This 177-nucleotide RNA was probed chemically with DMS and 2A3. For 2A3, 7,527 sequencing reads were counted. For DMS, 8,936 sequencing reads were counted. 2A3 adducts were read by reverse transcription with SuperScript II with manganese. High DMS reactivity at an A or C suggests that its Watson-Crick edge is free. Values cover nucleotides 27 to 126.
RNA sequence: GGGAACGACUCGAGUAGAGUCGAAAAUGAAAUAGCGUGUGCAAGACGCUGAUCUUGCCAUGAACUGGAACUUUAGUGCUGAGGUCCGAGUUCCAGGGUAUCAUGUCGGACCUUAGCACUAAUUAAAGUAAAUUAACGAGUUCGCUCGUUAAUUUACAAAAGAAACAACAACAACAAC
Reactivity to DMS in 0.01 (KOAc 150mM, MgCl2 10mM, bicine 150mM(pH8.5), 24C), signal-to-noise 6, nucleotides 027 to 126: u010g000a090a090a120u010a050g000c030g030u000g010u010g010c010a020a010g010a020c020g030c250u010g000a080u000c000u000u000g000c010c010a010u000g010a080a140c080u000g000g010a100a140c100u000u000u000a010g010u000g000c000u010g000a010g010g000u000c000c000g000a040g000u000u010c170c080a080g000g000g010u010a060u000c100a080u000g010u000c010g000g000a020c000c000u000u000a000g010c000a000c000u000a000a000u000u000a060a070a100
Reactivity to 2A3 in 0.01 (KOAc 150mM, MgCl2 10mM, bicine 150mM(pH8.5), 24C), signal-to-noise 5, nucleotides 027 to 126: u170g030a040a020a060u130a050g050c020g010u030g090u120g020c020a010a000g010a010c040g050c300u030g050a200u010c000u000u000g000c000c000a000u000g010a080a090c030u070g030g080a040a030c020u050u000u020a010g000u010g000c000u010g010a000g000g020u000c000c000g010a010g030u090u070c050c020a020g050g010g020u120a060u300c070a080u150g100u090c000g000g010a000c000c000u000u000a000g000c000a000c000u000a000a000u000u040a020a010a010
It was measured as part of the RMDB library M2PK90.